[RMDB]
RNA sequence: GGGAACGACUCGAGUAGAGUCGAAAAGUCAUGCCUUCGGGCAUGACAGGUACCGAGAGGUACCCCAUAGCGUACAGCAGACUCAGAUUGUACGCUAAGUAAGUGUGUGUUCAAUAAGGUCCAAUUGAACACACACUCCGUUGGACCAAGAGUGUGAAGGUAAAAUGGGUUUCGACCCAUUUUACCUAAAAGAAACAACAACAACAAC
Reactivity to 2A3 in 0.01 (KOAc 150mM, MgCl2 10mM, bicine 150mM(pH8.5), 24C), signal-to-noise 1, nucleotides 027 to 156: g020u000c010a000u000g000c010c040u050u130c260g010g010g000c010a000u000g000a000c000a000g000g000u000a000c010c040g050a040g000a010g150g010u000a000c000c000c000c010a030u040a000g000c000g000u010a000c010a020g120c040a050g080a280c140u150c190a030g020a300u030u000g000u000a000c000g000c000u000a030a000g080u100a010a090g000u000g000u000g000u000g030u010u000c030a000a040u080a150a140g100g230u150c030c000a000a050u000u000g000a010a000c000a000c000a040c000a000c000u000c000c030g060u010u050g020g050a030c040c040a040a110g060a040g050u060g040u060g100a120